[RMDB]
RNA sequence: GGGAACGACUCGAGUAGAGUCGAAAAGCUAUCAUUCGUGAUAGCGGUAAAGCGUACUACCGGUAAUUCGUGGACGACGGGAGUAUGUCCCAAAUAGGACAUACGAAGAACGUUACCACGUCGCAGGUAUCGCAUUCUAGAUCGUUUCGACGAUCAAAGACUUCACCUUAUUCGUAAGGUGAAGUCUAAAAGAAACAACAACAACAAC
Reactivity to DMS in 0.01 (KOAc 150mM, MgCl2 10mM, bicine 150mM(pH8.5), 24C), signal-to-noise 2, nucleotides 027 to 156: g020c000u000a020u000c020a130u000u000c300g040u000g000a000u000a000g050c000g020g030u000a030a100a130g030c060g020u000a040c100u000a020c010c010g020g060u000a050a160u000u000c010g080u000g000g000a030c070g020a020c000g000g010g010a300g050u000a000u000g020u000c000c010c010a030a110a210u000a050g000g010a040c000a010u000a010c000g020a130a180g000a080a130c020g000u000u000a150c000c010a040c000g000u000c300g000c040a090g030g010u000a070u010c030g000c040a260u000u000c030u000a140g000a020u000c000g000u000u000u010c270g040a110c010g000a040u010c010a070a090
Reactivity to 2A3 in 0.01 (KOAc 150mM, MgCl2 10mM, bicine 150mM(pH8.5), 24C), signal-to-noise 4, nucleotides 027 to 156: g000c000u000a000u010c010a020u010u210c260g080u050g010a010u000a000g000c000g000g000u070a040a040a000g000c010g010u060a090c070u010a020c030c010g020g030u160a210a280u100u090c020g030u040g070g090a270c180g020a010c010g050g000g000a020g000u000a000u000g000u020c000c010c020a140a270a030u300a050g020g000a000c040a000u000a000c000g030a050a010g030a030a010c000g000u010u020a030c000c000a000c000g000u030c030g020c070a050g040g000u030a050u300c010g000c020a010u070u000c050u070a120g010a010u000c010g020u010u130u150c230g080a050c000g000a010u000c010a030a000